[RMDB]
Structure probing data (DMS and 2A3) for a 177-nucleotide construct. The DMS profile rests on 5,437 reads. The reactions ran in a buffer of 150 mM KOAc, 10 mM MgCl2 and 150 mM bicine (pH 8.5), at 24 C. For 2A3 the reverse transcriptase was SuperScript II with manganese. In probing experiments dimethyl sulfate is read out at A N1 and C N3, which are open when not base-paired.

RNA sequence: GGGAACGACUCGAGUAGAGUCGAAAAGUCACCAAGCAGGGGGUGCUACAGUGGAUGCAGGAGCAGCUGCAGCUGAGGCAACAGCACAAGCACAGCGGGACGCAGCAGCAAAAGCUCAGCGGGAUGCUGACAUUAACCCCUUCGGGGGUUAAUGUCAAAAAGAAACAACAACAACAAC
Reactivity to DMS in 0.01 (KOAc 150mM, MgCl2 10mM, bicine 150mM(pH8.5), 24C), signal-to-noise 4, nucleotides 027 to 126: g010u050c040a090c020c040a130a150g000c070a040g000g000g000g000g020u010g020c050u010a080c090a040g030u010g000g010a080u030g010c050a050g010g010a110g030c040a140g000c020u010g000c050a090g000c000u000g010a160g000g020c060a050a110c090a100g010c050a110c150a170a090g000c040a040c080a010g010c000g010g010g030a110c120g000c020a070g000c050a090g010c110a050a060a040a090g000c010u000c030a040g010c010g000g020g020a070u020g000c110
Reactivity to 2A3 in 0.01 (KOAc 150mM, MgCl2 10mM, bicine 150mM(pH8.5), 24C), signal-to-noise 3, nucleotides 027 to 126: g040u050c020a020c180c010a090a020g030c080a080g010g060g000g000g000u010g010c010u020a030c020a020g020u050g120g040a070u060g020c010a030g000g060a040g020c010a000g050c020u020g020c020a030g000c000u000g010a080g130g040c010a060a020c020a060g080c020a030c010a050a070g030c000a000c010a060g010c010g030g000g010a050c110g000c030a030g000c010a010g040c010a000a080a050a000g000c000u010c030a010g020c030g000g050g000a040u090g020c030